[RMDB]
RNA sequence: GGGAACGACUCGAGUAGAGUCGAAAAAGUGGAAGACCAUGAAACUCAUGAAAAUUAUUAUCAUUUACGUACAAUGUUUCAAGGAAGUGAAAGCAAUGAAUCUUUUACUGAUACAACUCGAUCCCGAGGUAUUAAUUUUAUUCGUAAAAUUAAUACCAAAAGAAACAACAACAACAAC
Reactivity to DMS in 0.01 (KOAc 150mM, MgCl2 10mM, bicine 150mM(pH8.5), 24C), signal-to-noise 4, nucleotides 027 to 126: a070g030u000g010g010a090a080g000a130c090c010a060u000g010a050a090a040c040u000c110a090u000g000a050a060a090a120u000u010a100u010u010a100u010c050a040u000u000u000a070c190g010u010a070c190a050a030u000g010u000u010u010c060a030a090g010g000a110a080g010u010g000a030a020a050g000c250a070a060u010g010a110a150u000c010u000u000u000u000a050c030u000g000a140u010a070c090a050a100c040u010c040g020a080u000c010c010c010g010a060
Reactivity to 2A3 in 0.01 (KOAc 150mM, MgCl2 10mM, bicine 150mM(pH8.5), 24C), signal-to-noise 3, nucleotides 027 to 126: a000g020u010g040g010a040a010g010a020c010c010a000u010g000a040a040a020c030u030c050a030u050g060a140a240a100a070u140u110a090u070u100a060u150c010a030u050u080u140a050c040g040u070a030c020a060a110u130g020u020u030u060c050a050a020g020g020a050a020g010u010g000a040a030a010g000c050a050a100u150g090a090a070u070c010u010u010u020u000a010c000u010g010a020u020a150c050a100a080c050u010c020g030a030u030c010c010c010g040a060
This 177-nucleotide RNA was probed chemically with DMS and 2A3. The DMS profile rests on 3,529 reads. Reactivities are given for positions 27 through 126.